[RMDB]
RNA sequence: GGGAACGACUCGAGUAGAGUCGAAAAUUGACGAAGUGGAGACAAGACGUACAACGUUGCGUUGUCCGGCUGAUGUCACUUUCUUCUUGAAUCAGAAGUACGAAGGGCAAGUGAUGUGCACUUCAAGCCGGGUCCUUCGAUUCGUCGAAGGACCCGGAAAAGAAACAACAACAACAAC
Reactivity to 2A3 in 0.01 (KOAc 150mM, MgCl2 10mM, bicine 150mM(pH8.5), 24C), signal-to-noise 1, nucleotides 027 to 126: u000u000g140a030c110g000a000a000g000u000g000g140a100g000a170c090a000a030g000a010c000g000u030a000c000a050a050c000g050u040u110g080c150g090u000u000g000u040c000c000g000g000c000u020g000a130u200g000u030c000a090c000u000u000u000c000u060u000c000u000u130g100a280a090u090c000a080g130a300a000g110u280a130c040g000a000a000g040g070g000c090a140a000g050u040g170a080u030g140u000g000c000a000c000u020u000c040a000a020g000